[RMDB]
RNA sequence: GGGAACGACUCGAGUAGAGUCGAAAAGACGCCUUUAGAAGAAGAGGCUAGGGGGUAUUCCGGUGUGGGAUGCUUAGUAAUAUGCAACGCUAAUUGCAUAAGAUUGUAGGACGGAAUUUACAGUCUUUAGAGAUAAGCACGUUCGCGUGCUUAUCAAGAUUUAUAGUGUGUUCGCACACUAUAAAUCAAAAGAAACAACAACAACAAC
Reactivity to 2A3 in 0.01 (KOAc 150mM, MgCl2 10mM, bicine 150mM(pH8.5), 24C), signal-to-noise 6, nucleotides 027 to 156: g050a010c050g010c010c000u080u070u090a170g040a260a010g030a030a000g010a020g030g000c050u050a060g030g010g000g000g000u060a090u080u070c070c060g030g040u180g030u130g040g020g010a030u050g010c020u040u050a030g020u070a050a130u050a030u080g000c010a020a020c050g030c170u120a100a110u090u010g000c000a010u010a050a040g030a050u050u080g020u040a010g010g060a020c060g030g040a040a030u070u070u070a060c020a020g010u000c000u010u070u070a110g040a000g000a050u000a000a000g000c000a000c000g010u020u040c110g010c010g100u000g010c000u000u000a000u000c000a000a000
Reactivity to DMS in 0.01 (KOAc 150mM, MgCl2 10mM, bicine 150mM(pH8.5), 24C), signal-to-noise 2, nucleotides 027 to 156: g020a110c100g010c010c020u010u010u050a130g010a160a150g000a120a090g020a060g020g000c000u000a100g030g000g000g000g040u000a080u000u000c060c030g030g020u010g020u000g020g030g010a090u000g020c070u000u000a090g010u000a070a180u010a080u010g000c050a050a040c100g020c160u000a100a140u000u000g010c000a060u000a090a090g000a070u000u010g020u010a050g020g000a180c050g000g020a090a270u000u000u000a030c030a010g050u000c010u000u010u000a110g010a220g000a020u000a020a000g000c000a010c000g020u010u000c280g020c010g100u000g000c000u010u000a000u000c000a080a090
The record gives the reactivity of an RNA of 207 nucleotides to 2A3 and DMS.
Conditions: 150 mM KOAc, 10 mM MgCl2 and 150 mM bicine (pH 8.5), 24 C.
The data come from the RNA Mapping Database (RMDB), library M2RFPK.
Reactivities are given for positions 27 through 156.
The 2A3 profile rests on 6,489 reads.